[RMDB]
RNA sequence: GGGAACGACUCGAGUAGAGUCGAAAAGAUAUGGAUCCCGCCAUAUGGUUUGCCAUUGUCAGAGCGUGUACUCGGAAACGAGUACCGCUCUUGGAUUUAUGGUGAUCUUAUGGCGGGAUCCUAAGUCCCUUAGAUAUCACUUCGGUGAUAUCUAAGGAAAAGAAACAACAACAACAAC
Reactivity to 2A3 in 0.01 (KOAc 150mM, MgCl2 10mM, bicine 150mM(pH8.5), 24C), signal-to-noise 1, nucleotides 027 to 126: g050a090u210a050u170g000g000a000u000c020c000c000g040c010c000a030u040a000u060g090g110u050u140u300g020c030c020a000u010u030g020u030c000a000g030a000g020c060g000u300g000u170a000c000u000c000g000g070a030a130a070c000g020a000g010u000a010c000c000g000c000u000c000u000u030g000g000a010u000u300u300a000u050g000g070u010g010a010u000c000u000u010a010u010g000g010c000g000g000g000a000u000c000c000u000a020a000g010u010c000
Reactivity to DMS in 0.01 (KOAc 150mM, MgCl2 10mM, bicine 150mM(pH8.5), 24C), signal-to-noise 2, nucleotides 027 to 126: g000a090u010a300u010g000g000a020u000c000c000c010g000c010c000a000u000a000u010g010g020u000u000u000g060c000c000a010u000u000g010u000c020a030g000a020g000c000g010u030g030u000a010c000u000c000g000g010a130a100a270c000g020a020g010u000a000c000c000g000c000u000c000u010u000g020g020a020u000u000u000a000u010g010g020u010g000a010u000c000u010u000a010u000g010g030c010g010g020g000a000u000c000c010u000a010a110g010u000c050
An RNA of 177 nucleotides, treated with 2A3 and DMS and read out base by base. High DMS reactivity at an A or C suggests that its Watson-Crick edge is free. The DMS profile rests on 4,870 reads. The RNA was probed in 150 mM KOAc, 10 mM MgCl2 and 150 mM bicine (pH 8.5) at 24 C.